[RMDB]
RNA sequence: GGGAACGACUCGAGUAGAGUCGAAAACAAGUCUCAGACUUGCUUGUUAAAUUACUGCGUGGAAUGCCGAUUCCAGAUUUUGAUUUAGACGAUUUUAUUGACGCACCAUGCUAUUGCUUUAACGCUGCCUGAGUACAAAGUUCGCUUUGUACUCAGGAAAAGAAACAACAACAACAAC
Reactivity to 2A3 in 0.01 (KOAc 150mM, MgCl2 10mM, bicine 150mM(pH8.5), 24C), signal-to-noise 3, nucleotides 027 to 126: c010a010a020g020u000c080u040c200a090g030a050c010u020u020g020c020u050u100g050u030u060a050a030a010u080u040a040c040u000g030c000g020u010g020g040a220a110u070g010c070c020g040a050u080u000c030c010a050g020a120u050u100u040u120g100a100u030u080u140a080g020a100c050g000a010u020u040u080u070a100u020u080g010a000c020g000c000a010c010c010a000u020g020c000u040a070u090u090g010c020u060u070u050a050a000c040g010c030u030g000
Reactivity to DMS in 0.01 (KOAc 150mM, MgCl2 10mM, bicine 150mM(pH8.5), 24C), signal-to-noise 3, nucleotides 027 to 126: c000a010a020g000u010c010u000c250a160g000a030c030u000u000g010c060u010u000g000u000u000a030a040a070u000u000a100c150u000g020c050g030u020g000g020a060a030u000g020c020c060g000a190u000u010c110c100a110g010a060u000u000u000u000g000a090u000u010u020a130g000a110c150g000a080u000u000u010u010a070u000u010g010a220c300g000c070a060c010c030a020u000g020c010u010a100u010u000g000c170u000u000u000a010a050c070g030c160u000g000
The record gives the reactivity of an RNA of 177 nucleotides to 2A3 and DMS. For DMS the reverse transcriptase was MarathonRT. Conditions: 150 mM KOAc, 10 mM MgCl2 and 150 mM bicine (pH 8.5), 24 C.